[RMDB]
RNA sequence: GGGAACGACUCGAGUAGAGUCGAAAACGAUCUGUUCGCAGAUCGAGCUACGGAGACGUAGCAAAGCGAGCGAGGAGCUGGACGCUCGCCCUACCGGAAAUGUAAGCAUAUCCACGUGUGCUAGGAUAUGCCCAGCUCCAGAGAAACAGCACACGAAUACUCAGUCAUUAUUCGUAAUGACUGAGUAAAAAGAAACAACAACAACAAC
Reactivity to DMS in 0.01 (KOAc 150mM, MgCl2 10mM, bicine 150mM(pH8.5), 24C), signal-to-noise 2, nucleotides 027 to 156: c040g050a030u000c040u000g000u010u000c300g090c020a010g000a030u000c010g020a120g000c020u000a040c010g010g010a300g010a250c010g020u000a010g000c000a040a050a070g000c010g030a020g020c010g050a130g020g000a070g030c020u000g000g000a140c060g010c030u000c000g020c010c020c020u010a200c050c000g000g010a080a070a100u010g000u010a120a090g020c020a050u000a060u000c000c000a110c050g030u000g030u000g010c000u010a130g020g010a020u000a000u000g000c020c010c030a040g030c020u010c020c050a070g010a100g000a060a000a090c040a020g010c000a010c000a030c000g010a070a100
Reactivity to 2A3 in 0.01 (KOAc 150mM, MgCl2 10mM, bicine 150mM(pH8.5), 24C), signal-to-noise 3, nucleotides 027 to 156: c010g000a010u000c000u010g010u060u060c140g020c050a010g000a010u000c000g010a020g000c000u000a000c000g010g010a050g020a030c010g000u000a000g000c000a000a040a010g010c000g000a000g000c000g010a020g000g010a000g010c000u000g000g020a020c010g000c000u000c000g000c000c010c000u050a070c010c030g070g060a050a010a010u120g060u200a100a050g000c000a000u000a000u000c010c000a030c060g000u000g000u000g000c010u020a040g000g000a000u000a000u000g000c000c010c000a000g000c000u000c010c000a010g020a000g010a010a000a000c010a000g000c000a000c000a000c010g010a010a010
Source: RMDB library OK3TST, as collected in RNAgym. Structure probing data (DMS and 2A3) for a 207-nucleotide construct. DMS (dimethyl sulfate) methylates the pairing face of unpaired adenines and cytosines. For DMS, 4,503 sequencing reads were counted.